[RMDB]
RNA sequence: GGGAACGACUCGAGUAGAGUCGAAAACAACAUGCUAGCGAUCGUCGACGGGGUGCCGCGCACGCUGCGGCUGGACCAGCUGAUCCGCUAUUACGUUGACCACCAACUCGACGUCAUUGUGCGGCGCGAGGCGGGCAGACUUCGGUCUGCCCGCCUCAAAAGAAACAACAACAACAAC
Reactivity to 2A3 in 0.01 (KOAc 150mM, MgCl2 10mM, bicine 150mM(pH8.5), 24C), signal-to-noise 2, nucleotides 027 to 126: c040a010a000c000a020u190g010c010u040a000g000c000g100a050u060c000g070u000c020g000a220c200g040g000g050g050u150g030c030c010g000c000g000c010a130c090g220c270u200g000c020g000g000c020u020g080g160a020c030c000a000g030c030u070g000a020u020c030c030g040c000u010a000u150u020a020c080g000u000u000g030a040c000c050a010c020c000a120a010c000u050c000g110a110c000g000u000c060a180u110u120g040u030g070c000g010g000c020g000c000